[RMDB]
RNA sequence: GGGAACGACUCGAGUAGAGUCGAAAACUCUUGACCUUGAAGGUAAGAGACAAGAGCUUUCCAUUUUAGAAGAACAGACCUUAAAAGAAGACUUUUGGCAAGACGUCACGAGUGCAGGGAAAGUCUCAUCUCCUUAUACGUUCGCGUAUAAGGAGAUAAAAGAAACAACAACAACAAC
Reactivity to DMS in 0.01 (KOAc 150mM, MgCl2 10mM, bicine 150mM(pH8.5), 24C), signal-to-noise 5, nucleotides 027 to 126: c000u000c000u000u000g010a140c030c010u000u000g000a130a130g000g010u010a080a100g000a080g020a180c040a030a020g010a020g030c020u000u000u000c010c010a160u010u010u000u000a090g010a110a070g000a070a080c120a080g000a190c040c020u000u000a070a090a090a070g020a070a080g010a030c050u000u000u000u000g000g010c030a060a060g000a110c110g000u000c070a050c100g010a080g010u000g020c070a070g000g000g000a040a060a090g010u000c020u010c070
Reactivity to 2A3 in 0.01 (KOAc 150mM, MgCl2 10mM, bicine 150mM(pH8.5), 24C), signal-to-noise 4, nucleotides 027 to 126: c000u000c000u000u020g080a070c000c010u030u080g170a270a060g180g000u110a040a020g060a010g000a040c020a040a000g000a000g000c000u020u000u000c000c010a040u050u070u050u170a160g000a280a000g000a040a010c040a050g070a100c020c030u080u110a030a110a020a000g130a090a000g070a050c010u020u040u040u060g000g000c040a070a100g220a130c070g050u020c010a010c050g030a020g030u050g040c030a020g000g020g050a000a040a050g040u000c000u010c010